[RMDB]
RNA sequence: GGGAACGACUCGAGUAGAGUCGAAAACUACGCGAUCACGGCACCGGCGACGUUCCUGCUUGCCGGGCGGGCUGAGAAGCAUGAGACGGAGAUUGCGCGGCUGCGUGGCGCUCGGUUGGUCGUGUGCUCGGAGAUUAACGCUGACAGCACGUUCGACUAACAUCAAAGCAUUCGUGCUUUGAUGUUAAAAAGAAACAACAACAACAAC
Reactivity to DMS in 0.01 (KOAc 150mM, MgCl2 10mM, bicine 150mM(pH8.5), 24C), signal-to-noise 3, nucleotides 027 to 156: c020u000a080c010g020c030g020a060u000c010a090c030g030g010c040a100c010c010g010g030c010g010a070c020g010u000u000c090c050u000g010c080u000u000g060c010c000g040g010g020c110g020g030g000c030u020g000a200g000a150a060g050c030a100u000g010a180g010a060c020g020g010a140g020a130u010u000g000c020g030c020g020g000c000u010g030c040g040u010g000g020c040g000c020u000c020g030g010u000u010g020g000u000c020g010u000g030u010g030c060u000c050g000g010a100g040a220u000u000a120a180c060g040c020u000g000a160c060a180g020c040a040c030g010u020u000c030g010a160c070
Reactivity to 2A3 in 0.01 (KOAc 150mM, MgCl2 10mM, bicine 150mM(pH8.5), 24C), signal-to-noise 5, nucleotides 027 to 156: c020u110a040c050g010c010g070a080u080c020a040c050g090g000c070a020c040c010g010g020c010g030a040c000g070u050u060c020c020u080g040c080u050u100g030c000c000g010g010g000c050g000g030g000c020u060g050a040g050a180a040g000c040a070u090g050a030g030a080c060g090g000a070g020a100u060u140g030c060g000c010g030g000c040u070g010c020g030u040g040g010c030g010c020u030c010g060g000u030u060g010g010u000c010g000u040g020u030g100c020u040c040g080g000a050g000a050u210u190a120a070c100g030c060u050g060a040c030a040g030c020a010c050g040u100u060c020g030a020c010